[RMDB]
Structure probing data (DMS and 2A3) for a 177-nucleotide construct. For 2A3 the reverse transcriptase was SuperScript II with manganese. DMS adducts were read by reverse transcription with MarathonRT. For DMS, 1,488 sequencing reads were counted. Source: RMDB library 15KREP, as collected in RNAgym.
RNA sequence: GGGAACGACUCGAGUAGAGUCGAAAACUUACCUACGGGAACUGCUGGUUUCCCCUUAUGUCCAGUCCCUCUCCCGUCCUGGUGAAGGGAGAUUCCGGAACGUUUAGCAUUUGAGGGACAAAGCCGCCUAUAAGAGUCUGUUCGCAGACUCUUAUAGAAAAGAAACAACAACAACAAC
Reactivity to DMS in 0.01 (KOAc 150mM, MgCl2 10mM, bicine 150mM(pH8.5), 24C), signal-to-noise 2, nucleotides 027 to 126: c130u010u000a130c010c020u010a110c160g030g000g000a070a110c090u000g010c020u000g060g020u010u010u000c000c010c010c050u010u000a040u000g010u010c090c270a220g000u000c010c010c020u000c000u000c020c010c010g000u000c030c020u000g000g020u010g000a050a040g020g020g010a040g000a050u010u010c130c090g000g000a070a040c060g000u010u000u000a220g010c070a050u000u010u000g010a120g010g020g000a040c270a040a110a080g000c020c230g000c140
Reactivity to 2A3 in 0.01 (KOAc 150mM, MgCl2 10mM, bicine 150mM(pH8.5), 24C), signal-to-noise 2, nucleotides 027 to 126: c020u060u100a080c010c050u020a080c140g080g040g040a090a080c060u130g000c030u170g070g030u020u030u050c000c000c000c000u020u070a010u020g030u020c040c000a040g000u000c000c000c000u000c000u030c000c000c000g080u050c030c030u180g120g050u290g030a040a010g000g000g000a010g010a000u060u000c100c020g100g000a130a100c010g110u120u090u200a040g000c000a020u000u010u070g080a190g000g000g000a000c060a000a080a000g000c000c020g020c010